Structure probing data (DMS and 2A3) for a 177-nucleotide construct. DMS adducts were read by reverse transcription with MarathonRT.
[RMDB]
RNA sequence: GGGAACGACUCGAGUAGAGUCGAAAAUGACAGUGAAUAGGCGCGAAAGCGUCUAACAAUUAGCAAUGACUGUAUGCUAAUUGACUAUUGUGAAAACAAUAGUUUGCUGUCUAACAGUCAUUGAUACGAUCUACUUUUAUUUCGAUAGGGGUAGAUCAAAAGAAACAACAACAACAAC
Reactivity to DMS in 0.01 (KOAc 150mM, MgCl2 10mM, bicine 150mM(pH8.5), 24C), signal-to-noise 9, nucleotides 027 to 126: u020g000a010c010a000g020u000g010a000a030u000a000g000g010c000g010c000g000a070a060a110g000c000g000u000c000u000a000a000c000a000a000u000u000a000g000c000a000a010u000g010a010c010u000g010u000a240u000g000c000u000a000a010u000u000g000a030c000u000a000u000u000g000u000g000a160a090a140a020c000a010a000u000a000g000u000u000u000g000c000u000g000u000c000u010a080a030c000a000g010u000c000a200u030u030g010a130u030a100c210
Reactivity to 2A3 in 0.01 (KOAc 150mM, MgCl2 10mM, bicine 150mM(pH8.5), 24C), signal-to-noise 9, nucleotides 027 to 126: u070g000a000c000a000g000u000g010a010a010u000a000g000g000c000g000c000g030a040a040a020g000c000g000u000c000u000a000a000c000a000a000u000u000a000g000c000a000a010u040g000a000c000u000g000u000a010u030g000c000u000a000a000u000u000g000a000c000u000a000u000u000g010u000g080a020a010a000a000c000a000a000u000a000g000u000u000u000g000c000u000g000u000c000u000a010a000c000a000g000u000c000a020u020u210g070a040u040a050c080